Chemical mapping of a 177-nucleotide RNA with DMS.

[RMDB]
RNA sequence: GGGAACGACUCGAGUAGAGUCGAAAACGGAGGACGUUGAGCGCGACCAGCACAGCCCCGAGGAGGAGCGCCAGCACACCGGCCACCCAGGGGAGGGGGCUGGCCUCCGAGCCGGUCUCAGCCAGGCCUAGCCUUCCCUAUUCGUAGGGAAGGCUAGAAAAGAAACAACAACAACAAC
Reactivity to DMS in 0.01 (KOAc 150mM, MgCl2 10mM, bicine 150mM(pH8.5), 24C), signal-to-noise 2, nucleotides 027 to 126: c040g000g020a100g000g000a140c120g010u000u010g030a120g010c060g020c100g000a150c040c040a120g010c060a130c070a120g000c020c010c010c050g000a110g000g010a230g000g050a260g000c120g000c020c010a040g010c010a070c120a210c040c000g010g020c000c030a080c020c020c050a150g010g010g050g000a150g000g000g030g020g040c000u000g000g000c010c010u010c040c040g000a160g000c030c000g010g010u000c050u000c050a080g000c020c010a080g000g010c120